Description
Conditions: 150 mM KOAc, 10 mM MgCl2 and 150 mM bicine (pH 8.5), 24 C. An RNA of 207 nucleotides, treated with DMS and 2A3 and read out base by base. Reactivities are given for positions 27 through 156. DMS (dimethyl sulfate) methylates the pairing face of unpaired adenines and cytosines. The 2A3 profile rests on 3,631 reads.
RNA sequence: GGGAACGACUCGAGUAGAGUCGAAAAGCAGAAUUUCACAACUUAAUCUCAUUCCCACCAGGAGUCUAUUACACAUUCAAGACCUUGAAAGACUACAAAGUCAAGAAUGGAAGGAACAGAUUAAAGGUGGAAUAUUACUUUCAGAAGGAAAGGGAAACAUCAGUUUUACUUUCGAGUAAAACUGAUGAAAAGAAACAACAACAACAAC
Reactivity to DMS in 0.01 (KOAc 150mM, MgCl2 10mM, bicine 150mM(pH8.5), 24C), signal-to-noise 3, nucleotides 027 to 156: g030c030a150g020a110a120u010u000u000c040a080c020a030a060c050u000u000a080a150u000c030u000c030a130u010u000c020c000c030a150c060c050a160g030g010a210g000u050c050u000a070u000u020a140c060a100c020a040u000u010c020a030a300g030a030c020c000u000u000g030a120a090a230g000a180c100u000a240c050a030a030a030g020u000c020a020a300g010a010a010u000g010g000a120a140g010g000a040a020c070a050g030a030u000u000a040a050a100g000g050u000g000g000a030a030u000a140u000u000a060c010u000u000u000c030a100g000a140a150g000g000a010a040a040g000g000g010a180a090a170
Reactivity to 2A3 in 0.01 (KOAc 150mM, MgCl2 10mM, bicine 150mM(pH8.5), 24C), signal-to-noise 6, nucleotides 027 to 156: g080c030a030g090a200a100u050u060u080c040a060c020a140a130c040u050u070a030a040u030c020u000c040a040u060u020c030c000c010a030c020c010a060g070g040a070g050u010c010u020a090u100u240a090c080a020c020a060u080u090c040a060a060g010a020c000c020u030u060g080a220a140a020g030a050c020u110a100c170a040a140a020g010u020c010a010a030g030a050a040u040g010g010a020a050g020g010a060a000c010a040g020a030u040u050a060a020a010g050g010u010g000g020a000a000u050a020u040u070a020c010u010u020u030c030a060g040a140a040g160g010a020a010a000g030g030g030a100a060a000